[RMDB]
RNA sequence: GGGAACGACUCGAGUAGAGUCGAAAAGAGCCCGUUUGUUUCGAGCUUUUGCCGCCUUUCUUUGCUCGUUUGUUUGGACCGUUGUUUGUUGGCGGUUUUCGGUCCUUUGUUUGUUUCGGGCUCGAGAGGGACCGGACGGCUUCGGCCGUUUGGUCCCAAAAGAAACAACAACAACAAC
Reactivity to 2A3 in 0.01 (KOAc 150mM, MgCl2 10mM, bicine 150mM(pH8.5), 24C), signal-to-noise 2, nucleotides 027 to 126: g040a000g060c000c000c020g010u050u100u090g180u000u030u070c000g010a020g000c030u100u100u140u160g060c070c020g060c000c020u100u230u100c140u160u280u100g000c010u000c050g150u050u190u140g110u130u130u030g010g000a020c010c020g000u020u000g090u170u130u130g090u040u100g040g000c000g010g000u120u000u080u000c010g020g000u020c000c000u050u040u020g070u080u040u060g060u020u000u060c000g000g010g000c020u000c090g020a000g020a050
Reactivity to DMS in 0.01 (KOAc 150mM, MgCl2 10mM, bicine 150mM(pH8.5), 24C), signal-to-noise 1, nucleotides 027 to 126: g000a040g030c010c000c010g010u040u020u010g010u010u010u020c030g020a060g010c020u000u000u000u000g000c070c040g000c040c020u010u030u000c110u010u010u020g010c010u010c020g020u040u020u020g000u010u000u030g000g010a060c010c000g020u000u010g000u020u000u020g020u020u000g000g000c030g000g010u000u000u030u010c000g000g010u000c000c020u010u010u000g010u030u020u000g020u020u010u010c010g020g010g020c000u000c040g000a100g000a290